[RMDB]
RNA sequence: GGGAACGACUCGAGUAGAGUCGAAAAGGGGUCUCCCGUUUGACGAGCCUGACAUGUCGGUACAGCUGAAGCCUCCACGGCUGUACACGACAACAGCAGGCUCCGAGGGAGACGGAGGCACCCAAAAUCCGGUACCGUCUUCGGACGGUACCGGAAACACUUAUGCUACCUUCGGGUAGCAUAAGUGAAAAGAAACAACAACAACAAC
Reactivity to 2A3 in 0.01 (KOAc 150mM, MgCl2 10mM, bicine 150mM(pH8.5), 24C), signal-to-noise 1, nucleotides 027 to 156: g080g000g000g020u000c000u000c010c000c010g000u170u120u230g000a000c000g010a000g000c010c000u080g030a090c190a280u300g000u000c000g010g000u000a000c010a000g000c000u030g010a150a000g050c000c000u000c000c010a020c020g010g010c000u000g000u020a020c030a030c010g000a010c000a220a050c030a040g040c000a000g000g000c000u010c000c010g010a010g010g000g000a000g000a000c000g000g000a000g000g000c000a030c000c020c010a130a110a010a080u010c000c000g010g000u000a000c000c000g010u020c010u030u070c210g090g010a000c000g000g000u000a000c010c020g030g000a010a000a000